[RMDB]
RNA sequence: GGGAACGACUCGAGUAGAGUCGAAAAUAGUUACCUAGAGCUGGACAAUCCUGCUGGAAACAAAAGGCGAUAUUCUGCCUGGGCAGAAUCUGUGACUAAUCUUCCUCAAGUCAUAAAACAAAAGGUAUGUCAGGCUUUGUUUAAAGCAAUAGGAAGCCCUUAAAACCUGUUUCGACAGGUUUUAAGGAAAAGAAACAACAACAACAAC
Reactivity to DMS in 0.01 (KOAc 150mM, MgCl2 10mM, bicine 150mM(pH8.5), 24C), signal-to-noise 1, nucleotides 027 to 156: u020a100g000u000u010a300c000c010u010a090g020a210g040c020u010g030g010a070c030a120a150u000c020c000u010g000c020u010g010g000a090a070a200c050a060a160a080a080g000g020c030g030a180u000a120u000u020c040u000g000c000c060u000g060g050g000c020a020g000a030a050u000c090u000g000u000g000a020c000u000a040a090u000c010u010u000c010c000u000c040a060a110g020u000c010a050u000a070a030a060a150c060a080a030a070a070g000g000u000a100u000g020u000c020a130g020g000c040u000u010u000g000u000u000u010a030a090a060g040c020a080a100u000a060g000g010a070a060g010c300
Reactivity to 2A3 in 0.01 (KOAc 150mM, MgCl2 10mM, bicine 150mM(pH8.5), 24C), signal-to-noise 2, nucleotides 027 to 156: u080a010g030u040u050a140c010c020u040a030g000a000g010c000u020g060g000a030c000a010a020u010c000c000u020g000c020u050g060g010a140a110a000c040a010a150a020a050g060g000c060g070a070u030a150u160u070c050u070g010c020c010u060g000g160g000c040a020g010a040a030u060c040u040g070u010g000a000c000u030a060a040u080c080u110u080c010c010u110c060a100a000g010u000c000a030u070a040a130a010a000c060a040a080a040a040g050g000u060a040u130g050u100c020a010g040g000c040u040u000u030g020u020u080u060a130a070a020g020c010a020a000u060a070g010g030a010a020g030c020
Chemical mapping of a 207-nucleotide RNA with DMS and 2A3.
It was measured as part of the RMDB library OK3TST.
The reactions ran in a buffer of 150 mM KOAc, 10 mM MgCl2 and 150 mM bicine (pH 8.5), at 24 C.